Chemical mapping of a 177-nucleotide RNA with DMS. For DMS, 980 sequencing reads were counted. Reactivities are given for positions 27 through 126. The reactions ran in a buffer of 150 mM KOAc, 10 mM MgCl2 and 150 mM bicine (pH 8.5), at 24 C.
[RMDB]
RNA sequence: GGGAACGACUCGAGUAGAGUCGAAAAAAGAGCCUCUAGGAGGAAGGUUCUGUCCUGCUGUGUGUGAACCACUGCUGGUCAACCUUGAAAGCUGCUGAAAUGGCCUGAGGCAGUACAAGAGAAGGCAUAAUUGUUCAAGCUUCGGCUUGAACAAUUAAAAAGAAACAACAACAACAAC
Reactivity to DMS in 0.01 (KOAc 150mM, MgCl2 10mM, bicine 150mM(pH8.5), 24C), signal-to-noise 1, nucleotides 027 to 126: a050a050g010a060g000c010c020u000c050u000a130g040g010a130g010g000a140a020g000g000u000u080c090u010g000u010c000c010u000g000c020u000g010u000g010u020g000u000g010a170a110c160c010a030c050u000g030c010u010g020g000u000c010a080a170c070c000u030u000g010a070a100a070g020c020u000g010c000u010g010a110a070a090u000g000g000c050c030u000g000a210g000g010c000a000g000u010a120c060a040a020g010a130g000a090a110g000g040c080a150